[RMDB]
RNA sequence: GGGAACGACUCGAGUAGAGUCGAAAAGGAACCGGAUGUCAUCACGUUGUUGCAGUACCAGAUGGCAUCUUAAAUCCGAUCUGCAAAUAAGCAUGUAGAAAGCUGAUGUGGGCUUUAGCUGGACGGGCUAGACUUAUUCGUUCGCGAAUAAGUCUAGAAAAGAAACAACAACAACAAC
Reactivity to DMS in 0.01 (KOAc 150mM, MgCl2 10mM, bicine 150mM(pH8.5), 24C), signal-to-noise 5, nucleotides 027 to 126: g010g010a080a090c060c150g000g000a030u000g010u000c000a000u000c010a220c280g010u000u000g000u000u000g000c080a060g010u010a080c090c100a130g020a010u010g000g010c010a000u000c000u000u010a040a100a150u010c000c040g010a160u010c020u000g010c020a050a060a080u020a070a090g010c100a060u010g000u020a050g000a060a060a050g010c020u000g010a110u000g010u010g010g000g000c050u000u010u000a040g030c020u000g020g000a080c060g000g000g000
Reactivity to 2A3 in 0.01 (KOAc 150mM, MgCl2 10mM, bicine 150mM(pH8.5), 24C), signal-to-noise 3, nucleotides 027 to 126: g030g010a080a070c020c000g000g020a000u000g000u000c000a000u000c010a010c170g090u090u090g060u080u080g060c040a060g030u130a030c060c040a030g000a000u000g000g000c000a000u000c000u000u030a020a020a000u040c010c000g010a090u020c010u000g000c020a000a030a150u140a050a060g040c030a030u090g000u070a020g120a220a090a010g020c010u040g030a220u150g090u150g100g080g000c040u000u040u060a020g000c000u020g010g050a010c030g020g030g000